[RMDB]
RNA sequence: GGGAACGACUCGAGUAGAGUCGAAAAAACGGAUUAUCCGGCGAUAAGGAGGAUGCCUUGGCAAAGCACUUUACUUUUUGAAGUGUCCUGCGCGCCCACGACAGCCCUUGAAAAUCCUGGCUAGAGACUCAAGGCAGGAAUUCGUUCCUGCCUUGAGAAAAGAAACAACAACAACAAC
Reactivity to DMS in 0.01 (KOAc 150mM, MgCl2 10mM, bicine 150mM(pH8.5), 24C), signal-to-noise 2, nucleotides 027 to 126: a040a110c120g020g010a070u000u040a090u010c010c090g000g020c040g000a150u010a080a060g000g040a070g020g020a090u010g000c020c030u000u000g010g020c080a050a150a100g000c020a000c020u010u000u020a090c140u000u010u000u020u020g000a020a030g010u010g000u020c040c030u010g000c090g000c040g000c030c010c030a070c060g000a110c150a130g030c040c010c050u000u000g020a050a070a030a070u010c010c010u000g010g000c070u020a040g030a110g000a200
Reactivity to 2A3 in 0.01 (KOAc 150mM, MgCl2 10mM, bicine 150mM(pH8.5), 24C), signal-to-noise 3, nucleotides 027 to 126: a000a010c090g000g000a020u140u130a050u180c010c000g010g010c040g080a080u150a140a050g030g020a070g070g000a050u060g020c000c010u030u040g110g030c060a120a060a000g000c000a000c000u060u050u100a180c000u140u110u100u050u170g020a030a020g000u040g020u080c000c020u050g000c040g010c020g030c030c010c000a030c000g000a000c000a010g030c000c000c000u050u020g020a050a020a000a020u050c000c010u010g000g000c000u050a020g000a030g000a080

An RNA of 177 nucleotides, treated with DMS and 2A3 and read out base by base.
The reactions ran in a buffer of 150 mM KOAc, 10 mM MgCl2 and 150 mM bicine (pH 8.5), at 24 C.
It was measured as part of the RMDB library RFM100.
The DMS profile rests on 3,546 reads.